Structure probing data (DMS) for a 177-nucleotide construct. Values are in units of 0.01, from 0 to 300, in steps of 10. The data come from the RNA Mapping Database (RMDB), library M2PK50.
RNA sequence: GGGAACGACUCGAGUAGAGUCGAAAAGAACCAGGCUUCGGCCUGGUUCAUAAUAACGCGGGCGUGGGACACAGCCGGAGCAGGCCUCGGAUAGUCUCAGUAUAAUCUUAGCCUUCGGGCUAAGAAAGCCUACUACAUACUUCGGUAUGUAGUAGGCAAAAGAAACAACAACAACAAC
Reactivity to DMS in 0.01 (KOAc 150mM, MgCl2 10mM, bicine 150mM(pH8.5), 24C), signal-to-noise 1, nucleotides 027 to 126: g000a000a020c000c000a010g020g010c000u010u000c240g010g030c000c010u020g000g000u010u000c000a010u000a060a040u000a140a110c090g000c070g020g010g040c060g010u010g000g000g080a090c020a110c070a060g030c030c040g000g000a100g040c050a070g000g000c040c010u010c010g010g000a060u010a060g000u000c040u000c040a140g010u010a070u000a110a150u010c000u000u000a010g000c020c000u010u010c250g020g020g000c000u000a000a020g000a010a070a040